RNA sequence: GGGAACGACUCGAGUAGAGUCGAAAAUAGGCAACUUUUUGCCGAGUGAAUCGAACAUCGAUAUCUCUCUUUUUCCCAGUUGCCUAAAUCCAUGUAAUUGGCUGCGUGAGGAAUUUUUUUGAUCUGUCGCAAUUAACCGUUUCGACGGUUAAUUGCGAAAAGAAACAACAACAACAAC
Reactivity to 2A3 in 0.01 (KOAc 150mM, MgCl2 10mM, bicine 150mM(pH8.5), 24C), signal-to-noise 1, nucleotides 027 to 126: u110a000g000g000c000a010a010c000u100u240u070u080u140g030c000c000g030a060g000u000g020a010a000u000c020g040a210a050c000a240u040c010g070a040u010a300u000c010u010c040u000c010u000u080u000u050u000c010c010c070a000g000u000u040g000c010c000u030a090a110a000u000c000c000a010u050g070u210a050a170u090u100g040g000c040u000g000c010g000u030g070a100g000g140a000a010u080u060u030u000u050u080u190g040a040u010c020u000g010u000